[RMDB]
RNA sequence: GGGAACGACUCGAGUAGAGUCGAAAAGGAAAGCAGAGGAAGAAAAUCUGCCACAAGAUGAAAUUUAACUCAUAUUUUGCCUGAGAAAGACCAUUAGAAGGACAUUCUGGUUAAACUAACAUCCUUGAAACACCGGGUGGUUUUAGGACAAGAAGUACGUACCCUAUAGUUUCGACUAUAGGGUACGAAAAGAAACAACAACAACAAC
Reactivity to 2A3 in 0.01 (KOAc 150mM, MgCl2 10mM, bicine 150mM(pH8.5), 24C), signal-to-noise 3, nucleotides 027 to 156: g050g030a080a000a010g010c020a000g020a020g050g050a100a060g030a080a230a010a030u020c030u030g060c060c010a070c010a020a050g010a030u080g020a030a110a120u120u150u100a110a040c020u010c030a050u050a130u120u050u090u090g040c020c010u050g000a020g110a040a050a000g030a020c010c000a000u030u050a030g050a100a020g040g000a020c030a030u100u070c030u030g060g000u080u080a030a080a040c010u010a010a030c010a060u020c010c000u030u100g070a060a030a010c020a010c020c040g060g060g120u050g010g010u020u020u030u020a010g000g010a010c020a020a030g200a040a000g130u300a020
Reactivity to DMS in 0.01 (KOAc 150mM, MgCl2 10mM, bicine 150mM(pH8.5), 24C), signal-to-noise 2, nucleotides 027 to 156: g040g010a030a080a090g000c030a030g000a020g010g010a120a160g010a130a070a090a140u010c020u000g000c030c040a170c110a070a060g020a070u000g000a060a110a120u000u000u010a070a070c050u010c020a100u010a130u000u000u010u000g000c040c020u000g000a180g000a130a150a060g010a090c050c070a140u000u010a100g000a090a080g020g010a060c050a110u020u000c080u020g000g060u000u000a040a070a040c040u010a100a080c060a050u000c020c000u020u020g020a070a020a070c030a120c020c070g050g050g030u020g010g030u000u000u000u000a060g000g000a060c050a030a070g000a040a050g030u010a070